[RMDB]
RNA sequence: GGGAACGACUCGAGUAGAGUCGAAAAUCCCCAUAGUUCGCUAUGGGGAAAAGCCGUACCGCGUAGCACGCGGAUAGGAGCGAAGAUAUCCACGCCACGCGAAAACCUUCGCCUUCGGGCGAAGGAAGAAUACUUGCUCGUUCGCGAGCAAGUAUUCAAAAGAAACAACAACAACAAC
Reactivity to 2A3 in 0.01 (KOAc 150mM, MgCl2 10mM, bicine 150mM(pH8.5), 24C), signal-to-noise 2, nucleotides 027 to 126: u020c000c000c000c010a000u000a010g020u040u040c180g000c090u010a000u010g000g000g000g000a000a070a040a000g000c010c000g070u090a110c050c010g010c000g050u030a020g040c120a020c140g030c070g000g010a010u030a030g040g020a080g060c040g100a070a030g030a180u100a030u080c000c020a020c030g000c030c010a020c020g000c010g010a010a030a060a110c000c000u010u000c000g020c000c020u050u120c280g060g000g000c000g000a000a010g010g010a000a010
Reactivity to DMS in 0.01 (KOAc 150mM, MgCl2 10mM, bicine 150mM(pH8.5), 24C), signal-to-noise 1, nucleotides 027 to 126: u010c000c000c030c000a010u010a030g040u010u000c180g020c000u000a000u000g000g000g040g000a010a020a010a080g030c020c000g040u010a140c120c040g030c000g010u000a060g010c080a300c080g010c140g010g000a030u000a010g030g000a070g050c170g010a070a050g010a170u000a010u000c010c000a030c030g020c080c010a010c000g030c030g030a050a110a130a110c010c000u000u000c010g000c000c010u000u000c110g080g000g000c010g000a030a010g010g010a000a020
An RNA of 177 nucleotides, treated with 2A3 and DMS and read out base by base. Conditions: 150 mM KOAc, 10 mM MgCl2 and 150 mM bicine (pH 8.5), 24 C. For DMS the reverse transcriptase was MarathonRT.